This 207-nucleotide RNA was probed chemically with 2A3.
The RNA was probed in 150 mM KOAc, 10 mM MgCl2 and 150 mM bicine (pH 8.5) at 24 C.
Source: RMDB library M2RFPK, as collected in RNAgym.
2A3 adducts were read by reverse transcription with SuperScript II with manganese.
RNA sequence: GGGAACGACUCGAGUAGAGUCGAAAAAGCCAAGGACUACGGUCCUCGGCAACAACCGUCACAACGGCUUCCUGGCGUGACGGGGUUAACCCCAACGGAGCAAGUGCGAGCUUACGAGCUCGCACAAUUUAGGAGAAUUCCUUCGGGAAUUCUCCAAUCUAUAAUUAUGCUUCGGCAUAAUUAUAGAAAAAGAAACAACAACAACAAC
Reactivity to 2A3 in 0.01 (KOAc 150mM, MgCl2 10mM, bicine 150mM(pH8.5), 24C), signal-to-noise 2, nucleotides 027 to 156: a000g010c000c000a000a010g010g000a000c010u020a020c300g020g010u030c010c010u000c000g010g050c000a000a000c050a000a030c010c000g000u000c010a000c000a030a040c080g050g070c050u220u180c040c040u070g050g030c020g010u000g000a000c000g000g010g000g000u120u130a060a050c010c020c000c000a050a010c050g070g020a030g030c020a060a110g040u000g020c040g000a030g000c000u100u100a070c170g120a040g000c000u020c000g010c000a010c010a000a040u050u080u210a050g000g000a000g000a000a000u000u000c000c030u010u060c190g070g000g020a000a000u000u020c000u000c000c000a000a000